Chemical mapping of a 177-nucleotide RNA with DMS and 2A3. The reactions ran in a buffer of 150 mM KOAc, 10 mM MgCl2 and 150 mM bicine (pH 8.5), at 24 C. It was measured as part of the RMDB library M2PK50. High 2A3 reactivity points to a flexible backbone, as in loops and unpaired stretches.
RNA sequence: GGGAACGACUCGAGUAGAGUCGAAAACAUGACGAGUUCGCUCGUCAUGAAACAAAGAAAGAUAGUCUGAAGCGCCAGACUAGCGCAAAAGAAAGAAAGAAAAAAGCAAACUCUUCGGAGUUUGCAACUAGAGACUAAGGUUCGCCUUAGUCUCUAGAAAAGAAACAACAACAACAAC
Reactivity to DMS in 0.01 (KOAc 150mM, MgCl2 10mM, bicine 150mM(pH8.5), 24C), signal-to-noise 3, nucleotides 027 to 126: c020a010u000g000a020c010g010a030g020u010u020c270g060c000u030c000g020u000c000a010u010g000a080a100a120c090a070a100a090g020a110a150a100g000a060u000a010g000u010c000u000g000a160a150g020c140g000c140c030a030g020a040c040u000a010g000c030g010c180a100a040a060a100g000a070a070a080g010a080a060a080g020a020a050a030a100a080a150g000c000a010a010a000c000u000c010u000u000c180g040g000a020g000u000u000u000g010c000a010a070
Reactivity to 2A3 in 0.01 (KOAc 150mM, MgCl2 10mM, bicine 150mM(pH8.5), 24C), signal-to-noise 3, nucleotides 027 to 126: c000a010u000g010a000c000g020a020g030u070u040c140g130c100u000c000g020u030c010a000u000g000a000a000a000c030a020a120a000g200a070a150a000g060a070u040a010g030u000c010u000g030a120a030g060c050g070c180c020a010g030a090c030u020a020g040c050g020c040a140a040a110a010g130a050a090a020g080a020a130a030g060a050a230a030a030a010a000g030c010a000a000a000c010u020c010u070u120c240g040g000a000g000u000u000u000g010c000a000a000